About this RNA: This 207-nucleotide RNA was probed chemically with 2A3 and DMS. Conditions: 150 mM KOAc, 10 mM MgCl2 and 150 mM bicine (pH 8.5), 24 C. The 2A3 profile rests on 1,766 reads. Reactivities are given for positions 27 through 156. The data come from the RNA Mapping Database (RMDB), library OK3TST.
[RMDB]
RNA sequence: GGGAACGACUCGAGUAGAGUCGAAAAAACAGGAGCAGGAGUUUGCGGCUAAGAUGGCUGAUAUGGAAGCCAAAACAAAUCUUAUGCAGGCUCAGACCGCGGAGAUUCUUGCCAAGAUUGGUCUAGACGUUCGCAAGCAAGACCUUGAGGAGUAUAACAAUUAGCUUCAAUUCGUUGAAGCUAAUUGAAAAGAAACAACAACAACAAC
Reactivity to 2A3 in 0.01 (KOAc 150mM, MgCl2 10mM, bicine 150mM(pH8.5), 24C), signal-to-noise 3, nucleotides 027 to 156: a020a000c080a050g030g000a050g000c040a000g010g050a010g020u020u080u070g010c020g010g030c020u040a050a000g030a080u060g000g010c020u030g040a060u060a110u270g090g000a030a000g000c010c000a010a100a010a010c040a010a070a030u010c030u010u030a040u170g030c020a020g030g000c000u020c050a040g070a120c030c020g000c020g010g000a030g000a030u080u040c020u050u040g010c030c020a040a060g050a190u070u140g020g000u000c030u060a030g020a120c040g070u070u060c040g090c070a040a000g000c040a080a000g020a040c030c000u050u080g040a020g040g050a060g050u160a110u060a220a020
Reactivity to DMS in 0.01 (KOAc 150mM, MgCl2 10mM, bicine 150mM(pH8.5), 24C), signal-to-noise 3, nucleotides 027 to 156: a060a070c030a100g050g000a120g020c030a070g010g040a060g020u000u000u000g000c050g010g030c090u020a060a070g020a110u010g010g040c030u020g010a180u000a150u000g040g000a130a060g020c000c000a030a040a080a150c110a060a090a070u000c030u000u010a100u020g040c020a100g000g010c070u000c110a100g010a070c030c020g000c060g030g000a060g010a110u000u000c020u000u000g010c010c080a060a140g000a140u000u000g010g020u000c050u000a100g020a120c120g020u000u010c040g030c040a070a090g030c020a070a100g000a100c050c010u000u000g020a090g010g020a120g010u000a080u000a080a210